[RMDB]
RNA sequence: GGGAACGACUCGAGUAGAGUCGAAAACAAGGCGUGUCUCAAGAGAAGUCGCAGACGGAGAGAAGGCGCCCACUUGCGGCAGAUGCGCAUCCACCGUCGCAUGCGGGGAGGAAGCGCGAGAAGCGAGCAUCACUCGCCGCUUCGGCGGCGAGUGAUGAAAAGAAACAACAACAACAAC
Reactivity to 2A3 in 0.01 (KOAc 150mM, MgCl2 10mM, bicine 150mM(pH8.5), 24C), signal-to-noise 2, nucleotides 027 to 126: c010a000a110g030g000c010g170u000g050u030c060u000c020a000a020g040a010g040a120a040g110u000c010g010c300a040g010a060c000g030g040a030g000a000g010a090a000g110g000c000g030c010c010c010a060c000u030u080g000c000g080g040c080a000g010a080u210g000c000g000c000a000u050c020c020a100c020c030g140u190c080g030c240a100u300g000c070g000g060g000g030a140g040g060a080a080g000c010g000c070g000a000g000a120a000g000c080g000a000g060
Reactivity to DMS in 0.01 (KOAc 150mM, MgCl2 10mM, bicine 150mM(pH8.5), 24C), signal-to-noise 1, nucleotides 027 to 126: c120a010a060g000g000c000g000u010g000u000c060u000c050a040a300g000a070g000a300a190g000u050c050g000c150a210g000a000c100g000g000a300g000a080g000a010a040g000g000c000g000c000c000c240a020c000u000u000g000c050g000g050c090a050g000a060u070g000c000g010c000a010u000c010c010a070c000c030g000u000c110g000c210a000u020g000c010g000g040g070g000a180g000g020a030a110g000c010g000c000g000a080g000a100a140g000c000g010a030g000